[RMDB]
RNA sequence: GGGAACGACUCGAGUAGAGUCGAAAAACAGUGAAGAAGACAGCAGCAAAAAGUAAGCCUAAAUCUUUGAGAUGGGUUAAUGUUGCAAUUACCUAACUGGUUUCCACGUGUCUAUUUCAAUUUUUUUAUUGCCAAAACUUACUAUUGAUAUUACAGACAUGCACCGUCCAUUCGUGGACGGUGCAUGAAAAGAAACAACAACAACAAC
Reactivity to 2A3 in 0.01 (KOAc 150mM, MgCl2 10mM, bicine 150mM(pH8.5), 24C), signal-to-noise 1, nucleotides 027 to 156: a000c020a000g020u020g120a100a020g020a020a000g090a240c190a050g000c020a000g000c000a060a110a170a230a060g150u270a080a030g090c000c000u270a300a290a060u170c120u230u300u300g170a150g070a100u030g000g020g000u020u030a150a000u190g000u000u000g000c000a040a040u030u000a030c090c000u060a000a030c000u000g010g000u000u000u000c000c030a000c020g090u050g020u000c000u090a100u000u090u070c030a070a070u000u060u000u060u000u300u060a100u120u190g140c000c000a040a120a190a000c100u270u190a020c050u030a050u190u070g070a050u050a090u280u200a050c120a020g040a000